This 177-nucleotide RNA was probed chemically with 2A3 and DMS. The RNA was probed in 150 mM KOAc, 10 mM MgCl2 and 150 mM bicine (pH 8.5) at 24 C. DMS adducts were read by reverse transcription with MarathonRT. High DMS reactivity at an A or C suggests that its Watson-Crick edge is free.
[RMDB]
RNA sequence: GGGAACGACUCGAGUAGAGUCGAAAAAAAAGAUAAGAAGAUUCCUUGACAAAAAAUAGGCCCUAUGAUAAAUUUAAAGUAACUUGUGACAAAGUCGUGCAUGGAUGCACUAAAAAGACACCCUAUUUAUACGUAAGAGAUUCGUCUCUUACGUAUAAAAAGAAACAACAACAACAAC
Reactivity to 2A3 in 0.01 (KOAc 150mM, MgCl2 10mM, bicine 150mM(pH8.5), 24C), signal-to-noise 1, nucleotides 027 to 126: a000a000a000a000g080a050u200a160a030g110a030a010g010a130u000u040c010c000u020u140g040a100c050a020a090a020a070a030a000u010a040g040g010c000c010c040u280a100u080g140a070u120a060a190a070u140u170u100a040a050a010g060u000a030a000c050u020u050g000u060g030a000c080a140a160a110g050u010c010g030u010g050c070a010u130g050g130a090u120g000c050a020c050u070a000a080a160a000a000g000a000c000a000c010c000c020u000a000u030u010
Reactivity to DMS in 0.01 (KOAc 150mM, MgCl2 10mM, bicine 150mM(pH8.5), 24C), signal-to-noise 1, nucleotides 027 to 126: a100a070a040a080g000a110u010a030a080g010a100a120g000a200u020u000c000c000u000u020g010a110c080a050a040a080a050a080a130u000a060g010g020c070c030c010u020a050u020g000a080u000a050a120a170u060u020u020a010a050a070g010u000a040a010c010u010u000g000u010g000a080c090a040a040a110g020u010c060g060u000g010c030a010u010g010g020a050u020g040c020a040c010u030a010a040a040a060a020g010a070c120a040c050c040c020u000a130u020u000